[RMDB]
RNA sequence: GGGAACGACUCGAGUAGAGUCGAAAAAAUGCGGGAAAGGCAGGGUGUACCCCUAUCGACCAUCCCGGCCCGCGCUGGUCGGCAUAUGUAUUCAAGCUUCGCGGCUUCGGCGUCGAUAUUGAAACCACGUAUAUUACGUGUUCGCACGUAAUAUACGAAAAGAAACAACAACAACAAC
Reactivity to 2A3 in 0.01 (KOAc 150mM, MgCl2 10mM, bicine 150mM(pH8.5), 24C), signal-to-noise 7, nucleotides 027 to 126: a000a000u170g010c040g010g020g040a120a100a060g100g000c050a020g030g010g000u120g060u180a120c010c000c000c010u030a060u130c040g050a060c010c010a030u050c010c000c000g010g000c010c000c000g000c010g010c080u060g020g010u040c000g020g010c040a080u130a070u230g080u060a150u060u150c060a070a030g020c020u050u060c040g010c040g060g000c000u050u060c060g030g000c010g020u050c010g020a040u020a130u120u160g070a080a020a010c030c040a060
Reactivity to DMS in 0.01 (KOAc 150mM, MgCl2 10mM, bicine 150mM(pH8.5), 24C), signal-to-noise 8, nucleotides 027 to 126: a080a060u010g010c030g000g000g000a090a080a100g010g010c060a070g000g000g000u010g010u010a200c100c010c010c020u000a060u000c040g020a130c040c050a080u000c040c010c010g010g010c080c010c020g020c090g020c130u000g010g010u000c020g000g010c120a060u000a060u000g010u000a120u000u000c100a060a090g010c060u010u000c090g020c100g010g000c060u000u000c070g000g010c050g000u000c040g000a050u000a060u010u000g000a090a080a120c070c070a190